This 207-nucleotide RNA was probed chemically with 2A3 and DMS. In probing experiments dimethyl sulfate is read out at A N1 and C N3, which are open when not base-paired. As a SHAPE reagent, 2A3 marks flexible, mostly unpaired nucleotides at the ribose 2'-OH. For 2A3, 3,138 sequencing reads were counted. The DMS profile rests on 4,564 reads.

RNA sequence: GGGAACGACUCGAGUAGAGUCGAAAAGAUGCACGGCAUUAGUGUGAUCCGAGAGGAUUACACAUUAUAACCUAGGCUGUGCUAGACUAGGUCCAUUGUGGCUUUUGCCACUUACAGUACCUCGACUUAUCACGCAUGGAGGUACGAACCAUGCUAAAGGAUCGUAAUGAUUCGUCAUUACGAUCCUAAAAGAAACAACAACAACAAC
Reactivity to 2A3 in 0.01 (KOAc 150mM, MgCl2 10mM, bicine 150mM(pH8.5), 24C), signal-to-noise 4, nucleotides 027 to 156: g100a020u080g000c000a000c020g000g000c020a070u060u160a140g000u000g000u000g010a000u000c000c000g030a050g020a040g090g000a000u000u000a000c000a000c010a010u070u090a100u030a080a050c050c070u050a060g130g000c000u010g000u010g010c050u040a030g020a020c030u010a000g000g000u010c050c010a060u000u110g000u000g000g020c020u130u120u150u300g020c000c010a000c000u040u060a040c020a030g020u030a010c000c020u010c040g040a050c010u130u130a070u240c040a050c150g000c000a020u010g030g000a040g040g070u080a030c030g000a000a000c020c000a010u020g000c000u070a200a160
Reactivity to DMS in 0.01 (KOAc 150mM, MgCl2 10mM, bicine 150mM(pH8.5), 24C), signal-to-noise 2, nucleotides 027 to 156: g020a140u010g020c000a060c010g010g040c020a120u010u000a180g040u000g010u000g010a020u010c010c020g000a300g010a300g030g000a020u000u000a020c000a000c000a140u000u010a100u010a050a060c040c010u000a020g000g000c010u010g020u000g010c040u000a100g010a080c030u010a020g000g010u010c060c080a200u000u010g000u000g000g040c010u000u010u020u010g030c010c000a040c000u030u000a020c120a170g030u000a040c000c020u000c020g020a070c070u010u020a130u000c180a140c160g000c090a080u000g030g020a080g060g030u010a040c010g020a110a100c010c010a030u000g010c020u000a060a190